[RMDB]
RNA sequence: GGGAACGACUCGAGUAGAGUCGAAAAGUCGAGCCUGGCGGGCUUACUGCCGGGCCGGUCAUCGGACUGAAGGAAGGCACAACAUUCCGCCUUCUCAAUGAUGAAGCUAUUGCGGCCCUCAUCUAUGCGGCCCGGGACGAUGCCGAAGAUGCGCGUGGUACGUGAUCACUUUCGAGUGAUCACGUACAAAAGAAACAACAACAACAAC
Reactivity to 2A3 in 0.01 (KOAc 150mM, MgCl2 10mM, bicine 150mM(pH8.5), 24C), signal-to-noise 2, nucleotides 027 to 156: g040u020c000g000a020g000c040c000u010g000g020c040g070g000g030c200u180u160a100c010u170g020c000c000g010g010g010c000c000g030g010u100c010a020u020c010g040g020a020c040u100g000a060a000g030g010a040a000g000g000c030a000c010a060a300c060a210u270u040c080c100g000c000c000u010u000c040u000c020a020a120u080g040a030u030g060a110a000g000c050u080a100u200u230g060c150g000g070c000c020c020u020c010a130u100c030u120a140u140g090c060g010g020c010c010c000g000g040g000a010c030g030a000u080g000c000c030g040a060a060g070a040u110g050c050g010c040g100u060g060